[RMDB]
RNA sequence: GGGAACGACUCGAGUAGAGUCGAAAAUGCUCUCGGCUGAAGUGUUCCACAGGUGGUGCGCGCGCCCACUUCUCCUCUACCUUAAUGUCGGAGCACCUGACGGCCAUAUCUCAGCUAGUGAAAUAUCGCCGUAUCCAGGUUUCGACCUGGAUACGGCAAAAGAAACAACAACAACAAC
Reactivity to 2A3 in 0.01 (KOAc 150mM, MgCl2 10mM, bicine 150mM(pH8.5), 24C), signal-to-noise 1, nucleotides 027 to 126: u080g010c000u010c020u010c060g000g070c040u060g000a050a000g050u010g070u140u160c010c000a000c030a060g000g010u070g080g020u020g010c150g000c000g040c000g000c000c010c000a020c000u060u000c000u000c000c040u000c010u020a090c000c000u070u250a200a000u220g020u090c040g050g000a020g010c000a000c000c010u060g100a050c000g000g000c000c000a050u000a020u050c050u000c010a000g000c020u040a000g040u010g190a040a040a040u270a010u090c130
Structure probing data (2A3) for a 177-nucleotide construct. Source: RMDB library OK1LIB, as collected in RNAgym. The reactions ran in a buffer of 150 mM KOAc, 10 mM MgCl2 and 150 mM bicine (pH 8.5), at 24 C. For 2A3 the reverse transcriptase was SuperScript II with manganese. The 2A3 profile rests on 692 reads.